[RMDB]
An RNA of 177 nucleotides, treated with DMS and 2A3 and read out base by base.
The data come from the RNA Mapping Database (RMDB), library OK2TRN.
2A3 adducts were read by reverse transcription with SuperScript II with manganese.
For DMS, 8,128 sequencing reads were counted.
RNA sequence: GGGAACGACUCGAGUAGAGUCGAAAAAGCAACAAUGAGGCUGGAUAAUCUGGAGCGGGAAAGGACCACUCAGAACGCCAAGUCACCAACUGACGAUGCCAAGGUGAUCACGGUCUCGAUAAAUAUGCAACGUAUAAGCAUUCGUGCUUAUACGUUGAAAAGAAACAACAACAACAAC
Reactivity to DMS in 0.01 (KOAc 150mM, MgCl2 10mM, bicine 150mM(pH8.5), 24C), signal-to-noise 7, nucleotides 027 to 126: a090g010c080a060a060c110a110a090u000g000a040g010g010c030u000g010g010a090u000a090a070u010c020u000g040g000a080g010c030g010g010g000a080a080a140g020g010a130c010c020a070c030u000c040a060g010a080a300c120g010c030c040a040a240g000u000c020a020c060c060a090a110c210u010g000a060c070g010a140u010g020c050c040a050a150g000g010u000g010a050u000c050a090c050g020g000u000c010u000c010g000a100u010a050a070a130u020a080u010g000
Reactivity to 2A3 in 0.01 (KOAc 150mM, MgCl2 10mM, bicine 150mM(pH8.5), 24C), signal-to-noise 8, nucleotides 027 to 126: a010g110c060a040a060c030a030a090u190g000a010g040g000c020u030g020g010a060u040a120a070u080c030u090g150g030a040g010c060g010g010g060a100a180a090g150g070a150c000c010a020c010u030c010a010g020a080a020c020g010c040c020a040a000g010u010c010a020c070c020a130a090c070u100g030a060c060g050a060u160g050c030c030a060a050g010g000u020g020a010u040c020a020c190g010g000u000c000u000c020g050a070u120a170a140a020u280a090u170g050